[RMDB]
RNA sequence: GGGAACGACUCGAGUAGAGUCGAAAAGGCCGCCCUGGCCGCCGCCGACGCCCGUCCCAACGCGAGCAUGCAGGCAAUCGCCGAGGCCUUUCACUCGCCGCCGGGCUGGGUCGUGGCCGCGAACGCGGCAGAAGACAAUCUUCGGAUUGUCUUCUGCAAAAGAAACAACAACAACAAC
Reactivity to 2A3 in 0.01 (KOAc 150mM, MgCl2 10mM, bicine 150mM(pH8.5), 24C), signal-to-noise 3, nucleotides 027 to 126: g040g000c010c000g020c020c030c020u030g040g000c020c000g020c020c020g000c000c020g110a030c010g030c000c000c010g040u040c020c010c010a020a010c010g000c000g010a010g020c100a050u200g020c040a010g010g010c000a030a180u190c130g060c130c090g040a100g120g000c010c010u060u130u080c030a020c000u000c000g000c000c010g050c060c030g000g000g000c030u110g030g000g010u090c050g000u050g010g000c020c000g010c010g020a130a030c110g020c030g230
Reactivity to DMS in 0.01 (KOAc 150mM, MgCl2 10mM, bicine 150mM(pH8.5), 24C), signal-to-noise 9, nucleotides 027 to 126: g010g010c020c020g020c040c040c030u000g010g030c030c020g020c030c150g030c030c020g020a100c090g010c020c010c010g000u000c010c010c020a060a300c300g000c010g010a030g010c050a090u010g100c300a060g000g000c010a040a100u010c110g010c080c050g010a080g000g000c010c010u000u010u000c040a080c010u000c010g020c010c040g020c220c270g000g000g010c010u000g010g000g010u010c050g020u000g000g010c000c120g010c030g010a080a120c200g010c110g010
The record gives the reactivity of an RNA of 177 nucleotides to 2A3 and DMS. For 2A3, 9,316 sequencing reads were counted. Conditions: 150 mM KOAc, 10 mM MgCl2 and 150 mM bicine (pH 8.5), 24 C.